[RMDB]
RNA sequence: GGGAACGACUCGAGUAGAGUCGAAAAUCAUGCUCGCCUGAAGGGUGGUCUUAUUUUAAAGUUUGACUCUGGCACCGUUAGCAAGACUUCAGACUGGAAGUGCAAGGUGACAGAUGUACUUUUCCCCCCUAAGGUCUACGUUCGCGUAGACCUUAGGAAAAGAAACAACAACAACAAC
Reactivity to 2A3 in 0.01 (KOAc 150mM, MgCl2 10mM, bicine 150mM(pH8.5), 24C), signal-to-noise 2, nucleotides 027 to 126: u020c020a020u060g020c020u030c070g000c000c000u110g180a150a060g120g030g000u030g040g000u000c000u010u000a020u040u030u010u070a020a080a030g030u010u060u110g070a020c020u000c000u010g000g000c010a000c000c000g080u050u060a040g030c020a070a140g090a140c000u000u040c020a160g100a300c150u200g190g010a020a000g040u010g020c020a010a060g000g010u010g010a010c000a010g010a000u070g020u000a010c000u010u000u020u010c000c000c000c000
Reactivity to DMS in 0.01 (KOAc 150mM, MgCl2 10mM, bicine 150mM(pH8.5), 24C), signal-to-noise 2, nucleotides 027 to 126: u010c150a020u000g020c030u010c020g070c000c000u000g030a150a070g020g000g040u000g010g010u000c020u000u000a060u000u000u000u000a020a050a050g010u000u000u000g010a050c140u000c010u000g000g000c010a010c000c010g000u020u000a200g010c060a170a100g000a300c000u000u000c000a120g000a170c270u010g000g020a040a010g000u000g020c010a090a130g000g010u000g010a010c000a010g000a020u000g000u000a030c000u000u000u000u000c010c010c010c190